Chemical mapping of a 177-nucleotide RNA with 2A3 and DMS.
The RNA was probed in 150 mM KOAc, 10 mM MgCl2 and 150 mM bicine (pH 8.5) at 24 C.
High DMS reactivity at an A or C suggests that its Watson-Crick edge is free.
RNA sequence: GGGAACGACUCGAGUAGAGUCGAAAAGCCUGAUAUAAGGCUGGCGCACCGUAUCGGUGUCCCUGAGCAGACCGGCGGGACGAUUCUUUCAUGGCGGGGCCUGUGCAUACCCCGUUUCAUCACCGGUUGUACAUCAAUGUUUCGACAUUGAUGUACAAAAAGAAACAACAACAACAAC
Reactivity to 2A3 in 0.01 (KOAc 150mM, MgCl2 10mM, bicine 150mM(pH8.5), 24C), signal-to-noise 9, nucleotides 027 to 126: g000c000c000u030g090a040u040a050u060a270a030g030g000c010u010g020g010c050g000c020a020c000c000g040u140a120u270c140g000g010u030g050u050c010c000c020u050g040a040g030c040a010g030a080c010c010g020g010c020g010g040g040a030c030g050a060u080u050c010u050u120u050c060a050u070g020g000c010g000g000g010g010c000c080u220g050u130g050c010a030u080a130c000c000c000c010g010u020u040u060c020a050u040c010a010c010c010g040g000u010
Reactivity to DMS in 0.01 (KOAc 150mM, MgCl2 10mM, bicine 150mM(pH8.5), 24C), signal-to-noise 9, nucleotides 027 to 126: g010c010c000u000g010a140u040a110u030a100a030g010g010c000u000g010g030c150g000c050a040c010c010g020u010a090u030c060g020g020u000g010u000c050c010c010u010g010a160g000c110a080g000a060c020c020g000g010c080g000g000g000a090c140g010a100u010u010c030u000u010u010c080a080u010g000g000c020g010g000g010g020c140c090u020g020u020g020c090a090u030a260c010c010c000c020g010u010u010u010c030a050u000c070a120c030c020g000g010u000